[RMDB]
RNA sequence: GGGAACGACUCGAGUAGAGUCGAAAACACACACACAUUCUUGUGCACACCGUCUGUGGCUGCUUUCCUGCCACAAGGGCAGAGCUAAAUCCUUGCAUGGCAGACUGUGUGGUCCACAAAACUGAAACUCGUCACUAGGCUUCGGCCUAGUGACGAGAAAAGAAACAACAACAACAAC
Reactivity to 2A3 in 0.01 (KOAc 150mM, MgCl2 10mM, bicine 150mM(pH8.5), 24C), signal-to-noise 2, nucleotides 027 to 126: c090a000c000a000c010a000c000a000c010a120u010u080c090u180u020g000u000g040c030a030c040a040c050c000g020u000c030u090g050u030g120g050c000u000g000c000u020u040u090c000c000u030g030c000c000a030c070a110a060g010g040g000c040a060g030a030g130c130u300a040a040a040u210c040c030u090u090g010c050a140u130g050g000c000a000g000a000c000u000g000u000g000u040g000g000u020c010c000a030c010a040a040a000a010c050u050g060a220a050a020
Background
This 177-nucleotide RNA was probed chemically with 2A3. The 2A3 profile rests on 744 reads. For 2A3 the reverse transcriptase was SuperScript II with manganese.